Structure probing data (DMS and 2A3) for a 177-nucleotide construct.
The RNA was probed in 150 mM KOAc, 10 mM MgCl2 and 150 mM bicine (pH 8.5) at 24 C.
Reactivities are rounded to 0.1 and cut off at 0 and 3.
RNA sequence: GGGAACGACUCGAGUAGAGUCGAAAAAUGCAGUCUGCCUCUCUUAUUGAGAUUGGCAAGAUAGGAGCCGCGUGCCAUUCUAUGCGCAUGGGGAAAGAAGCCUUGAAGGAAUUCUGCUCCACCAUAACUUCAAUCAUCAGUUCGCUGAUGAUUGAAGAAAAGAAACAACAACAACAAC
Reactivity to DMS in 0.01 (KOAc 150mM, MgCl2 10mM, bicine 150mM(pH8.5), 24C), signal-to-noise 2, nucleotides 027 to 126: a090u000g020c070a110g010u000c030u000g000c010c010u010c010u000c010u000u020a160u010u020g020a020g010a050u010u020g000g000c030a070a060g020a050u000a080g040g000a150g010c020c030g000c030g040u000g020c030c000a080u000u030c170u000a020u010g020c220g010c010a020u010g010g000g000g010a190a070a060g000a080a160g020c040c020u000u000g020a130a150g000g010a050a110u000u000c010u000g000c000u000c020c020a120c060c050a100u020a050a130
Reactivity to 2A3 in 0.01 (KOAc 150mM, MgCl2 10mM, bicine 150mM(pH8.5), 24C), signal-to-noise 2, nucleotides 027 to 126: a000u090g020c020a010g040u050c010u040g000c030c000u000c000u000c010u050u250a260u300u300g020a010g030a040u110u090g010g000c000a000a060g000a010u130a060g020g030a020g020c020c000g020c010g060u000g000c020c010a070u300u280c100u300a120u090g070c080g010c050a020u000g010g000g000g160a020a250a100g070a070a010g070c020c040u130u190g130a130a050g030g040a040a060u110u000c000u010g020c020u110c010c000a080c000c030a070u090a170a090